[RMDB]
RNA sequence: GGGAACGACUCGAGUAGAGUCGAAAAGACAAAUGCAGCAUAUUUGGCUAAGCAGGAAAGGGACGGUAGCUCCUGGUGUCAGUUCAUACGGUGUGAUGCAUCUGCGUCGUGCACACAUGCACCCAAAUAUAGCACAUUAAUUCGUUAAUGUGCUAUAAAAAGAAACAACAACAACAAC
Reactivity to DMS in 0.01 (KOAc 150mM, MgCl2 10mM, bicine 150mM(pH8.5), 24C), signal-to-noise 9, nucleotides 027 to 126: g000a070c060a040a070a060u000g010c040a050g010c050a070u010a080u010u000u000g010g010c040u000a070a100g020c030a040g010g000a050a080a080g010g010g000a060c070g010g010u000a070g010c060u000c030c020u000g010g010u000g010u000c050a050g000u000u000c090a070u000a090c130g010g010u000g010u000g000a100u000g010c020a030u000c070u010g010c100g020u000c110g010u000g000c020a030c080a040c080a040u000g000c070a100c010c010c030a050a070a140
Reactivity to 2A3 in 0.01 (KOAc 150mM, MgCl2 10mM, bicine 150mM(pH8.5), 24C), signal-to-noise 9, nucleotides 027 to 126: g040a010c020a020a080a020u100g000c010a030g010c010a050u050a150u210u120u140g040g010c010u050a070a030g030c010a010g020g080a090a060a030g050g010g010a010c040g050g020u050a020g020c040u020c020c010u030g030g030u030g030u030c040a040g030u060u090c030a030u090a150c070g050g010u030g020u030g030a160u030g000c010a020u010c040u100g050c030g070u130c030g020u060g000c010a010c010a000c000a040u060g040c010a060c010c010c010a000a060a000
Chemical mapping of a 177-nucleotide RNA with DMS and 2A3.
The DMS profile rests on 44,956 reads.
The reactions ran in a buffer of 150 mM KOAc, 10 mM MgCl2 and 150 mM bicine (pH 8.5), at 24 C.